[RMDB]
RNA sequence: GGGAACGACUCGAGUAGAGUCGAAAAGGGGUCUCGUCGAUGGUAGGGUAGGACAUGCUCCCGAUUGAGGCUGAAGCCUCCACGGCCUUAGAGGGAGCAACAGCCUACCCGAGAGUAGACGAGACGGAGGCACCCAAAAGCACGCUUCGGCGUGCAACACAGAUGAUGGAUUCGUCCAUCAUCUGUGAAAAGAAACAACAACAACAAC
Reactivity to 2A3 in 0.01 (KOAc 150mM, MgCl2 10mM, bicine 150mM(pH8.5), 24C), signal-to-noise 2, nucleotides 027 to 156: g250g030g030g010u020c000u010c010g000u010c010g010a060u000g000g020u000a010g000g030g000u010a000g000g040a050c170a270u300g000c010u010c000c000c000g040a040u080u280g030a010g000g000c000u000g010a050a040g000c000c000u030c000c000a000c000g000g000c000c010u020u020a030g030a070g020g030g000a010g000c000a020a000c030a010g000c000c000u000a000c010c020c000g000a000g000a000g000u010a000g000a000c000g000a030g000a000c010g000g000a000g000g000c010a080c000c000c000a040a140a000a030g010c020a000c000g000c000u060u130c250g110g000c030g010u000g000c000a020a000
Reactivity to DMS in 0.01 (KOAc 150mM, MgCl2 10mM, bicine 150mM(pH8.5), 24C), signal-to-noise 2, nucleotides 027 to 156: g010g010g020g060u010c000u000c000g010u000c010g000a230u010g000g040u010a300g000g010g040u000a010g050g010a060c060a300u020g020c010u000c000c000c010g000a300u010u010g020a010g000g000c010u010g000a080a140g040c000c000u010c020c060a300c100g010g010c000c010u000u000a060g010a300g010g010g000a020g000c020a010a020c090a130g010c020c000u000a030c000c010c010g000a040g010a130g030u000a300g010a030c010g020a070g010a020c000g000g000a050g010g000c020a160c040c000c010a050a050a070a180g000c000a000c010g010c020u000u000c300g070g010c000g050u010g010c000a020a030